Chemical mapping of a 177-nucleotide RNA with DMS.
The RNA was probed in 150 mM KOAc, 10 mM MgCl2 and 150 mM bicine (pH 8.5) at 24 C.
For DMS the reverse transcriptase was MarathonRT.
The data come from the RNA Mapping Database (RMDB), library 15KREP.
RNA sequence: GGGAACGACUCGAGUAGAGUCGAAAAGCCUACUAUGUGUGACAUCAAACAAAUGUUGUUCUGCAUGGAAGUUGUAAACAAGUACUUCGAAAUCUAUGACGGUGGUUGUCUUAAUGCUUCUGAAGUGGCUAUAAAGACCGUUCGCGGUCUUUAUAGCAAAAGAAACAACAACAACAAC
Reactivity to DMS in 0.01 (KOAc 150mM, MgCl2 10mM, bicine 150mM(pH8.5), 24C), signal-to-noise 1, nucleotides 027 to 126: g010c030c010u020a110c080u000a030u000g060u000g000u010g020a070c010a020u000c060a120a100a090c270a130a100a160u000g000u000u000g010u000u010c080u000g020c030a060u020g000g000a110a080g010u010u000g010u020a080a120a100c040a110a080g030u000a050c060u000u000c020g000a040a120a080u010c080u010a070u010g020a180c090g020g050u010g010g000u000u000g010u010c110u000u020a030a180u000g000c090u010u000c020u000g000a080a020g020u000g020